The record gives the reactivity of an RNA of 177 nucleotides to 2A3. The reactions ran in a buffer of 150 mM KOAc, 10 mM MgCl2 and 150 mM bicine (pH 8.5), at 24 C. Source: RMDB library OK1LIB, as collected in RNAgym. 2A3 adducts were read by reverse transcription with SuperScript II with manganese.
[RMDB]
RNA sequence: GGGAACGACUCGAGUAGAGUCGAAAAUUUCAGUAGUUGGGUUAGCGUUAACACUAUCGCUGGAAGGAACAUGUCACGCCCCCUGCAAUACCCUGUGAAUCAGACUUACCCACUCACACCAAUGAACCUUGCUUCGGCUAUUCGUAGCCGAAGCAAGAAAAGAAACAACAACAACAAC
Reactivity to 2A3 in 0.01 (KOAc 150mM, MgCl2 10mM, bicine 150mM(pH8.5), 24C), signal-to-noise 1, nucleotides 027 to 126: u020u020u000c000a140g050u250a000g000u070u030g070g030g000u100u000a090g000c070g030u100u070a200a000c000a030c210u080a000u040c070g040c000u010g000g160a080a000g010g010a000a100c070a160u260g000u080c070a000c000g130c000c000c000c000c000u040g000c000a010a030u010a080c000c000c000u060g130u030g190a000a120u100c000a000g060a220c000u070u130a000c020c000c020a070c000u070c000a120c000a000c000c000a000a000u230g030a050a050c030